[RMDB]
RNA sequence: GGGAACGACUCGAGUAGAGUCGAAAAAAAUUAUGGUCGCCGGCACGUAAGUGCACACCGAGAAUGACACUCUUUCGCCGUCAACCGUGUCGGUAGUCUUGCACAUCAGGAAUCCGUCUGCGUUGAAAUACGAACUGGAAUUCGUUCCAGUUCGUAUAAAAGAAACAACAACAACAAC
Reactivity to DMS in 0.01 (KOAc 150mM, MgCl2 10mM, bicine 150mM(pH8.5), 24C), signal-to-noise 4, nucleotides 027 to 126: a070a040a070u010u010a060u010g000g000u000c050g020c010c020g010g010c030a020c020g010u000a080a090g000u000g010c060a090c070a070c130c030g020a050g020a060a070u010g000a150c140a130c100u000c060u000u020u000c070g030c080c030g020u010c070a040a060c130c020g010u010g010u000c010g030g000u000a060g010u010c020u010u000g000c100a050c100a050u000c060a070g000g010a060a070u010c020c020g000u000c040u000g010c090g000u010u000g010a040a060
Reactivity to 2A3 in 0.01 (KOAc 150mM, MgCl2 10mM, bicine 150mM(pH8.5), 24C), signal-to-noise 1, nucleotides 027 to 126: a000a000a000u190u130a060u040g050g000u020c030g000c020c000g000g000c020a000c000g030u070a110a100g020u050g060c010a000c000a010c000c020g000a020g100a150a090u220g030a030c030a050c050u030c000u030u140u140c060g020c110c070g000u030c000a000a010c080c000g010u020g060u040c020g010g010u020a060g020u000c000u000u070g030c070a060c000a080u110c010a030g020g040a030a050u000c000c000g050u040c080u050g000c010g060u050u090g040a040a110
Description
Conditions: 150 mM KOAc, 10 mM MgCl2 and 150 mM bicine (pH 8.5), 24 C. An RNA of 177 nucleotides, treated with DMS and 2A3 and read out base by base. For 2A3, 1,570 sequencing reads were counted. For DMS, 3,138 sequencing reads were counted. For 2A3 the reverse transcriptase was SuperScript II with manganese.